Chemical mapping of a 177-nucleotide RNA with DMS and 2A3.
In probing experiments dimethyl sulfate is read out at A N1 and C N3, which are open when not base-paired.
Values are in units of 0.01, from 0 to 300, in steps of 10.
Values cover nucleotides 27 to 126.
The RNA was probed in 150 mM KOAc, 10 mM MgCl2 and 150 mM bicine (pH 8.5) at 24 C.
High 2A3 reactivity points to a flexible backbone, as in loops and unpaired stretches.
For DMS the reverse transcriptase was MarathonRT.
Source: RMDB library OK2TRN, as collected in RNAgym.

RNA sequence: GGGAACGACUCGAGUAGAGUCGAAAAAACGCCCAGCCGCUUGUCUAUGAGCCUGCUGCCGCCACAGAAGCCCUCUCUCCGACACAGACUGGCUCUGCAACAGAGGUAAUCGCCAGCGUGGAUGCGCGUUGCGUGUCCAGUUCGCUGGACACGCAACAAAAGAAACAACAACAACAAC
Reactivity to DMS in 0.01 (KOAc 150mM, MgCl2 10mM, bicine 150mM(pH8.5), 24C), signal-to-noise 2, nucleotides 027 to 126: a090a020c210g000c020c020c010a180g020c060c030g020c060u000u000g010u000c040u000a090u020g000a110g010c010c010u000g000c030u000g010c060c010g010c040c050a060c080a060g010a090a110g010c010c020c040u000c030u000c030u010c040c010g020a080c120a120c070a070g030a070c060u010g010g010c050u000c020u010g010c120a100a030c070a060g000a090g010g010u000a040a110u000c130g000c030c000a030g010c010g030u000g010g000a060u010g010c070g000c100
Reactivity to 2A3 in 0.01 (KOAc 150mM, MgCl2 10mM, bicine 150mM(pH8.5), 24C), signal-to-noise 1, nucleotides 027 to 126: a000a000c130g030c000c010c000a010g030c020c040g040c050u180u140g070u050c040u110a140u170g060a030g000c010c000u020g000c010u030g030c010c020g040c000c020a050c010a050g130a140a010g030c010c040c000u000c000u040c000u030c010c050g030a030c020a010c010a110g090a110c000u050g010g020c010u020c010u070g020c060a160a050c070a140g050a020g140g070u100a080a050u150c060g000c020c030a020g000c010g010u060g030g030a110u140g020c090g030c070
For 2A3, 903 sequencing reads were counted.